Overview
An RNA of 177 nucleotides, treated with DMS and read out base by base. For DMS the reverse transcriptase was MarathonRT.
RNA sequence: GGGAACGACUCGAGUAGAGUCGAAAACAUUUGUCCAAAGUGUACGUUAAUGGUUUAGAGGGAAAAAUGUAGAACCAGUUUGAUAGAGAAAGUCUCCAUUAGAAACAGGAAGUGACCAUUUGACUAAAAUGGGUACAGAGUUCGCUCUGUACCCAUUAAAAGAAACAACAACAACAAC
Reactivity to DMS in 0.01 (KOAc 150mM, MgCl2 10mM, bicine 150mM(pH8.5), 24C), signal-to-noise 2, nucleotides 027 to 126: c030a020u000u000u000g050u000c020c070a110a090a090g020u010g040u010a090c110g030u020u010a030a020u000g000g010u000u000u010a090g050a180g010g000g000a010a090a000a080a020u000g020u000a130g040a080a120c030c030a040g010u000u020u000g000a050u000a050g000a060g010a140a060a110g000u000c030u000c030c030a010u000u000a110g000a090a020a060c050a050g000g010a060a030g010u000g010a080c050c040a020u010u000u010g010a070c080u000a040a090